Chemical mapping of a 207-nucleotide RNA with 2A3.
The data come from the RNA Mapping Database (RMDB), library RNAMAK.
The reactions ran in a buffer of 150 mM KOAc, 10 mM MgCl2 and 150 mM bicine (pH 8.5), at 24 C.
For 2A3 the reverse transcriptase was SuperScript II with manganese.

RNA sequence: GGGAACGACUCGAGUAGAGUCGAAAAGCGUACUACCUCCCUUGGAUUUACAAAGGGAGCAAUGUACAGCAACUCCCAAAUAGGAGUUGCUUAACAUUGCUUUGAUCUUUGUUGUCAGGGAGGUAUCGCAAAACAGCAAUACUUCGGUAUUGCUGAAACUGUUCGUCUUGUUCGCAAGACGAACAGUAAAAGAAACAACAACAACAAC
Reactivity to 2A3 in 0.01 (KOAc 150mM, MgCl2 10mM, bicine 150mM(pH8.5), 24C), signal-to-noise 1, nucleotides 027 to 156: g010c000g040u090a130c030u000a010c020c010u050c000c010c030u000u190g170g000a120u180u200u050a010c020a020a010a020g030g010g030a000g010c000a000a010u010g010u010a020c070a010g040c000a000a000c010u000c010c020c110a070a280a040u300a130g010g000a000g000u020u000g000c000u010u010a040a000c000a000u000u040g060c000u180u050u040g110a110u000c000u000u020u000g010u000u010g020u010c000a000g000g000g000a000g010g110u000a010u000c000g000c000a140a000a000a000c000a000g000c000a000a000u000a000c000u030u070c250g090g000u000a000u000u000g000c000u010g000a020a030